[RMDB]
RNA sequence: GGGAACGACUCGAGUAGAGUCGAAAAGUAAAUCAAAAUAAGAGAGGUAAUGUCUGAGAAUAGAAUGGAUUCGAAUUUGUCCUAUUGGCACAGGUUAACCGUAAUUACCACCACCAAAAUAAAAAAAACACUAAGAUUACUUCGGUAAUCUUAGUGUAAAAGAAACAACAACAACAAC
Reactivity to DMS in 0.01 (KOAc 150mM, MgCl2 10mM, bicine 150mM(pH8.5), 24C), signal-to-noise 1, nucleotides 027 to 126: g000u020a090a100a140u000c030a110a040a120a100u000a060a100g030a080g000a110g000g030u010a030a050u000g000u000c050u010g030a150g020a070a040u000a030g000a040a080u000g000g000a030u000u000c190g000a050a040u000u020u000g000u000c020c020u000a030u000u000g000g000c040a080c020a050g020g010u000u000a030a080c110c060g000u000a050a040u010u000a070c030c020a130c040c050a060c030c030a020a030a040a060u050a000a000a020a060a020a080a160
Reactivity to 2A3 in 0.01 (KOAc 150mM, MgCl2 10mM, bicine 150mM(pH8.5), 24C), signal-to-noise 1, nucleotides 027 to 126: g040u020a010a080a100u110c070a000a000a110a290u300a220a020g120a000g010a060g040g040u060a080a100u060g020u010c070u100g000a060g020a090a050u060a060g080a050a060u110g010g070a000u210u000c090g020a190a110u050u000u070g000u000c000c050u040a070u100u120g060g000c040a000c040a100g000g020u070u080a140a120c010c000g000u010a000a010u030u000a020c000c000a000c000c000a020c030c000a040a000a030a050u270a070a020a030a000a000a010a000
Structure probing data (DMS and 2A3) for a 177-nucleotide construct. The reactions ran in a buffer of 150 mM KOAc, 10 mM MgCl2 and 150 mM bicine (pH 8.5), at 24 C. The data come from the RNA Mapping Database (RMDB), library M2PK90. DMS adducts were read by reverse transcription with MarathonRT.